[RMDB]
RNA sequence: GGGAACGACUCGAGUAGAGUCGAAAAGAUAUGGAAUAAGGGUAACCAGUGACGAAUUCGGAAACGAACUAUCACCAGUUAUGAAGCUUAUUCCUAAGUCAAAGUACAAUGCUUCGGCAUUGUACAAUCGCCUAGUAACGUUCGCGUUACUAGGCGAAAAAGAAACAACAACAACAAC
Reactivity to 2A3 in 0.01 (KOAc 150mM, MgCl2 10mM, bicine 150mM(pH8.5), 24C), signal-to-noise 1, nucleotides 027 to 126: g010a010u080a020u110g020g000a000a000u020a050a000g000g260g030u030a030a000c020c020a000g030u010g050a020c060g090a110a300u060u020c010g020g060a060a020a020c000g000a000a000c100u020a080u020c000a000c040c000a030g010u080u070a060u130g210a120a070g140c010u000u000a000u020u000c000c000u030a100a000g040u000c070a080a090a070g000u000a000c000a010a000u000g000c000u030u110c230g140g000c000a000u000u040g000u000a000c000a000a070
Reactivity to DMS in 0.01 (KOAc 150mM, MgCl2 10mM, bicine 150mM(pH8.5), 24C), signal-to-noise 1, nucleotides 027 to 126: g040a080u000a300u010g010g040a010a040u000a000a030g050g000g000u000a020a010c000c050a030g060u000g000a010c110g020a020a160u000u010c000g000g000a040a090a140c000g000a010a010c130u000a230u010c000a010c000c000a110g000u000u000a000u000g040a160a160g010c000u000u010a020u010u000c000c000u000a080a030g010u000c030a130a060a130g000u000a010c000a000a000u000g010c000u000u020c170g030g000c000a000u000u000g000u000a000c000a010a050